[RMDB]
An RNA of 177 nucleotides, treated with 2A3 and DMS and read out base by base. The data come from the RNA Mapping Database (RMDB), library TTRDEL. The reactions ran in a buffer of 150 mM KOAc, 10 mM MgCl2 and 150 mM bicine (pH 8.5), at 24 C.
RNA sequence: GGGAACGACUCGAGUAGAGUCGAAAAGAUAUGGACUCUUCAGGAAUAACGAAGAACUCGGAAACGAGGGAGUUACCUGAGAGAGUCCUAAGUCAAACAGGUAAAGUGGUUCGCCACUUUACCUGAAGUAAUACGGACGGUUCGCCGUCCGUAUUACAAAAGAAACAACAACAACAAC
Reactivity to 2A3 in 0.01 (KOAc 150mM, MgCl2 10mM, bicine 150mM(pH8.5), 24C), signal-to-noise 2, nucleotides 027 to 126: g010a000u060a070u150g020g010a000c010u000c000u040u020c010a000g010g040a300a300u100a110a030c020g160a300a160g060a070a050c010u000c010g030g000a100a070a050c020g000a020g020g000g020a020g000u000u010a020c000c020u070g000a100g040a010g020a000g090u000c000c000u010a050a010g010u040c020a030a010a170c010a000g000g010u010a000a000a000g000u000g000g120u060u190c300g040c100c000a000c010u000u000u000a000c000c000u000g000a000a000
Reactivity to DMS in 0.01 (KOAc 150mM, MgCl2 10mM, bicine 150mM(pH8.5), 24C), signal-to-noise 2, nucleotides 027 to 126: g000a000u010a300u010g010g010a030c010u010c030u020u000c000a010g010g000a190a130u000a000a000c020g000a040a140g000a130a180c010u000c020g000g040a110a080a210c000g000a010g010g000g000a090g000u020u010a020c000c000u000g000a100g020a020g000a010g030u000c000c000u000a010a050g000u000c030a130a160a210c000a000g000g020u000a000a000a000g030u000g000g010u030u000c300g010c010c010a000c010u000u000u000a000c010c010u010g010a000a040